Notes
The data come from the RNA Mapping Database (RMDB), library RNAMAK. This 207-nucleotide RNA was probed chemically with 2A3. For 2A3 the reverse transcriptase was SuperScript II with manganese. The reactions ran in a buffer of 150 mM KOAc, 10 mM MgCl2 and 150 mM bicine (pH 8.5), at 24 C.

[RMDB]
RNA sequence: GGGAACGACUCGAGUAGAGUCGAAAAGCGUACUACGUGAGGUUUAAGCUAGAGCUGUCCGAAUGCUAUCCCAAAUAGGAUAGAGGUAGACAGCUCUUGGACCUUAAACUACCCACCACGUAUCGCAAAGCCCUCUCAUCUUCGGAUGAGAGGGCAAGCUGGAGGGUAUGUUCGCAUACCCUCCAGCAAAAGAAACAACAACAACAAC
Reactivity to 2A3 in 0.01 (KOAc 150mM, MgCl2 10mM, bicine 150mM(pH8.5), 24C), signal-to-noise 2, nucleotides 027 to 156: g000c010g060u110a020c020u000a010c010g000u000g010a020g010g020u040u000u010a010a020g010c000u020a000g010a000g010c000u020g030u110c160c010g180a100a010u100g000c000u010a020u020c020c020c030a180a200a110u300a050g010g010a010u000a000g000a030g010g010u010a040g000a010c000a000g000c000u010c000u000u000g000g040a030c000c000u000u000a010a000a000c010u080a080c000c090c000a020c040c000a010c020g020u030a040u300c050g000c030a060a060a020g000c030c000c010u000c010u010c020a000u000c000u070u050c180g080g000a000u000g000a000g000a000g010g010g000c000a000a010